[RMDB]
RNA sequence: GGGAACGACUCGAGUAGAGUCGAAAAACGGUGCGGAAGUUCGCGCUUCCGUGAAACGCGAAAAUCGGACGGUGGCUGCAAGUCGCAUCGCAAAACCGCGGCAAGUGGAGUUAGAGAGAGGAGGCUGAAACCAUCCAACACUUCGGUGUUGGAUGAAUCUAACGAACAUCUUCGGAUGUUCGUUAGAAAAAGAAACAACAACAACAAC
Reactivity to DMS in 0.01 (KOAc 150mM, MgCl2 10mM, bicine 150mM(pH8.5), 24C), signal-to-noise 2, nucleotides 027 to 156: a030c020g020g040u020g030c000g000g000a060a100g030u000u010c180g030c200g000c000u000u000c010c070g010u000g010a020a060a040c030g060c000g010a100a020a090a100u020c080g030g000a050c040g030g040u010g050g070c010u000g010c050a030a190g000u000c070g010c020a110u000c050g000c000a060a050a070a110c020c060g040c050g030g010c050a080a070g020u010g000g010a100g010u000u000a060g010a070g000a150g030a070g000g000a050g040g000c050u000g000a110a100a180c180c000a040u000c020c020a010a010c000a010c000u000u020c280g040g070u000g030u000u000g010g020a010u000g030a010a060
This 207-nucleotide RNA was probed chemically with DMS.
The reactions ran in a buffer of 150 mM KOAc, 10 mM MgCl2 and 150 mM bicine (pH 8.5), at 24 C.
Source: RMDB library M2RFPK, as collected in RNAgym.
For DMS, 2,625 sequencing reads were counted.